[RMDB]
RNA sequence: GGGAACGACUCGAGUAGAGUCGAAAAGACGUAAUCCGCGCAAAUCCACAAACGCCAACGAUGAGCGUUUCGCUGUAGCCGCUUAAGGAAACAGCCGGGGCCGCCUGAGCCCUGUUACCAAAGACGGGAAACUCGAUGCCAUUCGUGGCAUCGAGAAGCAUCAGGGUAAGUUCGCUUACCCUGAUGCAAAAGAAACAACAACAACAAC
Reactivity to 2A3 in 0.01 (KOAc 150mM, MgCl2 10mM, bicine 150mM(pH8.5), 24C), signal-to-noise 1, nucleotides 027 to 156: g040a000c040g020u060a090a060u110c010c020g000c000g020c080a100a120a040u100c070c090a110c070a120a030a000c030g030c040c030a100a050c120g140a210u190g040a050g090c000g020u020u100u070c040g010c020u010g010u030a050g030c010c060g030c140u200u200a140a050g010g000a000a110a000c000a000g010c000c000g000g010g000g000c000c000g050c010c000u040g010a000g000c000c000c000u000g040u060u130a000c000c000a070a000a000g140a080c030g000g000g060a040a000a030c000u010c000g000a000u000g000c010c000a050u040u100c240g030u050g000g000c000a000u010c000g000a000g000a000a000